About this RNA
This 207-nucleotide RNA was probed chemically with 2A3. The reactions ran in a buffer of 150 mM KOAc, 10 mM MgCl2 and 150 mM bicine (pH 8.5), at 24 C. For 2A3, 843 sequencing reads were counted. 2A3 adducts were read by reverse transcription with SuperScript II with manganese.

[RMDB]
RNA sequence: GGGAACGACUCGAGUAGAGUCGAAAAGAACCCUUGCCAGUAAGUGGUUGGGUGGGGCUUGGGACCAGCCACCUCCUUCCAGGGGAGGCUGGAGGCGUGACACGUCUUCCCUGUGUGUCAGCUCAUCUUCCAGAUCACACCGCUGAACGUGACCCAGGUCCACCUAGUAAUUCGUUACUAGGUGGACAAAAGAAACAACAACAACAAC
Reactivity to 2A3 in 0.01 (KOAc 150mM, MgCl2 10mM, bicine 150mM(pH8.5), 24C), signal-to-noise 2, nucleotides 027 to 156: g030a070a020c010c000c020u010u060g090c060c010a170g060u290a220a040g030u100g110g100u140u140g120g000g060u190g010g010g000g010c040u030u020g050g010g000a010c010c010a010g000c010c010a030c000c000u020c010c000u220u270c110c090a070g030g030g040g000a010g000g010c010u010g010g030a000g000g030c120g090u070g020a020c000a000c120g010u010c000u050u020c000c010c070u030g070u000g010u000g010u000c000a010g030c030u000c040a080u070c090u120u000c030c000a070g010a160u080c050a030c010a010c040c050g040c100u020g080a150a040c090g040u060g030a020c040c030c030a020g000